[RMDB]
Description: The data come from the RNA Mapping Database (RMDB), library 15KREP. Chemical mapping of a 177-nucleotide RNA with 2A3 and DMS. For 2A3, 1,978 sequencing reads were counted. The reactions ran in a buffer of 150 mM KOAc, 10 mM MgCl2 and 150 mM bicine (pH 8.5), at 24 C.

RNA sequence: GGGAACGACUCGAGUAGAGUCGAAAAUCAUCCCACUGUGUGCUUCAAAUAAACUUCGCGUUGUAAUUCCUGACUUCACCGUCUGGAAUCAGGUAGUCACAUAUCCCUCGCUUAACUACGCUGGGGCCCAAUAGGGCCUGUUCGCAGGCCCUAUUGGAAAAGAAACAACAACAACAAC
Reactivity to 2A3 in 0.01 (KOAc 150mM, MgCl2 10mM, bicine 150mM(pH8.5), 24C), signal-to-noise 2, nucleotides 027 to 126: u060c000a060u000c000c020c000a040c040u070g030u000g000u010g030c010u050u010c040a050a160a230u170a120a100a030c020u030u060c090g040c070g040u030u030g020u080a020a050u020u010c020c000u020g020a020c010u010u040c090a020c030c040g010u000c010u020g020g020a010a010u010c010a000g000g060u030a020g060u100c030a020c010a050u080a100u100c000c000c000u020c010g020c020u080u090a130a070c080u080a030c100g000c030u030g020g000g040g000c010
Reactivity to DMS in 0.01 (KOAc 150mM, MgCl2 10mM, bicine 150mM(pH8.5), 24C), signal-to-noise 3, nucleotides 027 to 126: u010c200a150u000c010c010c010a140c180u010g020u000g030u010g010c010u000u000c060a080a140a090u000a050a080a050c030u000u000c080g000c070g020u000u010g000u020a110a070u000u000c000c010u000g020a020c000u000u000c290a100c220c190g000u000c040u000g000g000a030a010u000c120a050g020g000u000a010g000u000c070a040c070a070u000a050u010c010c000c000u000c260g020c030u010u000a060a130c140u000a080c120g000c030u000g010g010g000g020c300